[RMDB]
RNA sequence: GGGAACGACUCGAGUAGAGUCGAAAAUAUAAAGUCAUCAUGUUUUUUUCAUCAGUUUCUUGUUCGUUUCAAAAUUAUGAUUUUUGUUUACUUACACUCAUAAUCUUGAAACGAACAAAAAACUGAUGCUUAGAGCACAAUUCGUUGUGCUCUAAGCAAAAGAAACAACAACAACAAC
Reactivity to 2A3 in 0.01 (KOAc 150mM, MgCl2 10mM, bicine 150mM(pH8.5), 24C), signal-to-noise 3, nucleotides 027 to 126: u220a010u070a030a150a020g100u070c040a080u040c040a060u130g040u010u020u020u010u000u040u170c020a010u000c000a010g000u000u000u000c000u000u010g000u000u010c000g010u010u000u000c010a010a020a000a000u000u010a000u010g050a080u060u040u080u220u150g100u080u110u040a100c030u110u050a020c030a010c020u010c000a000u000a000a000u020c030u020u010g000a000a000a000c000g000a010a000c000a000a000a000a000a000a000c000u000g000a000u000